[RMDB]
RNA sequence: GGGAACGACUCGAGUAGAGUCGAAAACUUGUCACGGUCGAGCACCUUCUGCCAGCGGCUUUCGUCGGGGUCAUGCGUUUUCGGAAUCAUAAGGUUCAUGUCCGUAUUCCUUCAAUAUGAGCAUGAAAAAUUUAGCAGUAUUCGUACUGCUAAAUUUAAAAGAAACAACAACAACAAC
Reactivity to DMS in 0.01 (KOAc 150mM, MgCl2 10mM, bicine 150mM(pH8.5), 24C), signal-to-noise 9, nucleotides 027 to 126: c060u000u000g010u010c050a060c080g010g010u000c060g010a110g020c060a100c070c040u010u000c050u010g000c050c050a090g010c090g010g000c060u000u000u000c070g020u010c050g020g010g010g010u010c040a050u000g010c070g010u000u000u000u000c060g010g000a090a090u010c080a090u010a090a090g000g010u000u000c020a020u000g010u000c010c010g010u000a050u000u000c090c120u010u000c110a040a040u000a020u000g000a080g010c020a030u010g000a010a050
Reactivity to 2A3 in 0.01 (KOAc 150mM, MgCl2 10mM, bicine 150mM(pH8.5), 24C), signal-to-noise 5, nucleotides 027 to 126: c020u030u090g050u070c020a020c090g020g020u050c030g050a030g000c040a040c020c000u070u050c020u050g040c010c000a060g030c040g050g000c000u080u100u120c060g040u030c030g010g000g000g040u010c020a030u080g030c020g020u020u010u050u100c030g020g060a040a030u070c050a070u070a250a080g030g000u040u030c010a020u050g030u000c000c010g000u010a040u020u040c040c000u070u130c040a030a010u070a040u120g040a040g020c020a020u060g020a100a030
The record gives the reactivity of an RNA of 177 nucleotides to DMS and 2A3.